This 207-nucleotide RNA was probed chemically with DMS and 2A3.
DMS adducts were read by reverse transcription with MarathonRT.
Values cover nucleotides 27 to 156.
2A3 adducts were read by reverse transcription with SuperScript II with manganese.

[RMDB]
RNA sequence: GGGAACGACUCGAGUAGAGUCGAAAAUGCUCACUGAUGGCAAUUUGACGGCCUAAACUUUUAGUCAGAUACGUUGUUGUGGAGACUUGACGCAGCAAAAGAGAUUUAAAGUCCCGCAAAAUGUCGCUGUUUGAGACUGGCUUUGGCAUUUUGUUAAGGAACAUACUAUGUUCGCAUAGUAUGUUCCAAAAGAAACAACAACAACAAC
Reactivity to DMS in 0.01 (KOAc 150mM, MgCl2 10mM, bicine 150mM(pH8.5), 24C), signal-to-noise 2, nucleotides 027 to 156: u010g030c020u000c050a200c080u000g000a100u010g000g020c030a070a070u000u000u010g040a060c020g020g010c020c020u000a010a070a070c090u000u000u000u000a110g030u030c010a040g030a120u000a160c090g000u000u000g000u020u000g040u020g000g020a160g020a080c040u000u000g010a080c040g020c050a120g050c050a040a020a100a190g000a200g000a090u010u000u010a050a080a180g010u000c010c020c020g000c080a020a020a040a050u000g050u000c010g020c060u010g030u000u020u010g000a110g010a130c120u020g050g020c040u000u010u000g030g000c030a080u000u000u000u000g020u000u010a090a180
Reactivity to 2A3 in 0.01 (KOAc 150mM, MgCl2 10mM, bicine 150mM(pH8.5), 24C), signal-to-noise 5, nucleotides 027 to 156: u060g010c000u010c040a060c020u070g030a060u070g010g000c040a070a100u050u030u120g070a060c050g070g020c020c000u110a110a170a150c090u130u130u120u180a030g020u000c000a010g010a070u050a110c050g000u000u010g010u010u000g010u000g020g040a100g000a060c000u010u040g010a010c020g000c030a030g000c000a040a040a060a040g060a020g010a030u070u080u150a080a070a010g030u010c020c010c010g050c010a020a020a010a020u020g000u020c020g010c020u040g080u090u050u170g090a100g010a070c060u060g020g000c030u090u110u080g010g000c010a000u000u020u000u040g030u020u060a070a050